[RMDB]
RNA sequence: GGGAACGACUCGAGUAGAGUCGAAAAGAGUGUCUUUUUGGCAUUUUGGCGGAGGUAUUAGAGACUUGCUAGUUUUUCUAGCUUGUUAUACCUCAAUCUCGAGUAUACAAACCUUCGCCUAUAAAGAGGGUGUAUCCAUCUUCGGAUGGAUACACCCAAAAGAAACAACAACAACAAC
Reactivity to 2A3 in 0.01 (KOAc 150mM, MgCl2 10mM, bicine 150mM(pH8.5), 24C), signal-to-noise 1, nucleotides 027 to 126: g080a000g000u060g090u010c070u000u180u060u300u270g000g000c000a020u000u000u040u040g020g050c000g000g000a000g000g000u020a120u070u100a020g100a000g000a000c000u010u000g000c000u000a070g000u000u060u150u050u240c000u000a000g000c000u000u000g000u000u000a060u130a070c000c020u040c040a080a130u090c070u040c110g000a020g030u020a020u040a180c080a070a150a000c000c050u030u000c000g020c010c000u020a140u050a020a020a000g280a060
Chemical mapping of a 177-nucleotide RNA with 2A3. The reactions ran in a buffer of 150 mM KOAc, 10 mM MgCl2 and 150 mM bicine (pH 8.5), at 24 C.